The data come from the RNA Mapping Database (RMDB), library M2RFPK. Chemical mapping of a 207-nucleotide RNA with 2A3. For 2A3 the reverse transcriptase was SuperScript II with manganese.
[RMDB]
RNA sequence: GGGAACGACUCGAGUAGAGUCGAAAAGUUGCUCUGAAUGGAGUGCUCUACUGAGAUUAUAAAAUAGAAGGUAAGCUAUUAUCUCUUACAACAGGGCAGGGCUUGUUGGAAUAGGCGGUAAAGUCUAAAAACUACCUCACCUUCGGGUGAGGUAGAAGGUUAGUAAAACGUUCGCGUUUUACUAACCAAAAGAAACAACAACAACAAC
Reactivity to 2A3 in 0.01 (KOAc 150mM, MgCl2 10mM, bicine 150mM(pH8.5), 24C), signal-to-noise 1, nucleotides 027 to 156: g080u040u020g010c000u000c000u060g140a180a140u110g030g000a020g000u060g010c040u060c050u030a070c030u100g000a000g020a040u050u130a080u210a160a220a190a050u180a030g060a090a000g100g000u040a000a030g010c020u030a060u180u030a060u180c040u000c030u100u030a030c030a150a010c000a010g060g060g000c000a000g000g050g000c060u100u040g000u010u000g000g010a100a130u020a020g030g020c080g060g020u160a150a000a150g010u000c000u000a020a070a000a040a000c000u000a030c000c000u000c000a000c000c000u000u050c190g090g000g010u000g000a000g020g000u000a000g000a010a000